Conditions: 150 mM KOAc, 10 mM MgCl2 and 150 mM bicine (pH 8.5), 24 C. Structure probing data (2A3) for a 207-nucleotide construct. It was measured as part of the RMDB library M2RFPK. Reactivities are given for positions 27 through 156. For 2A3, 994 sequencing reads were counted.
RNA sequence: GGGAACGACUCGAGUAGAGUCGAAAAGCUGCGUGAAACCUCGCUGUUUUCUUGGCGAACUUUCAGCGAGGUGAGGCAAGGCGGCAAAAAAAAGUUGGGAGCAGCAACGGCAAGCAAAAAAAAAGUUACAAGUUGCGAUGGUUCGCCAUCGCAACAACCUAUUCCGUGAGUUCGCUCACGGAAUAGGAAAAGAAACAACAACAACAAC
Reactivity to 2A3 in 0.01 (KOAc 150mM, MgCl2 10mM, bicine 150mM(pH8.5), 24C), signal-to-noise 1, nucleotides 027 to 156: g000c010u010g000c010g080u100g030a120a060a020c020c000u010c000g000c000u010g030u000u040u000u030c050u060u100g180g000c080g040a020a000c020u080u050u020c000a000g000c000g000a000g000g000u000g000a020g030g040c040a010a010g080g000c010g000g010c030a090a000a000a000a000a190a000a000g080u090u080g000g000g030a040g070c010a000g000c020a060a020c010g060g010c000a020a010g020c000a090a010a070a070a000a000a000a000a000g000u020u020a090c050a110a090g000u000u000g010c000g000a000u000g010g000u010u060c070g010c130c000a000u010c000g060c000a000a000c000a000a000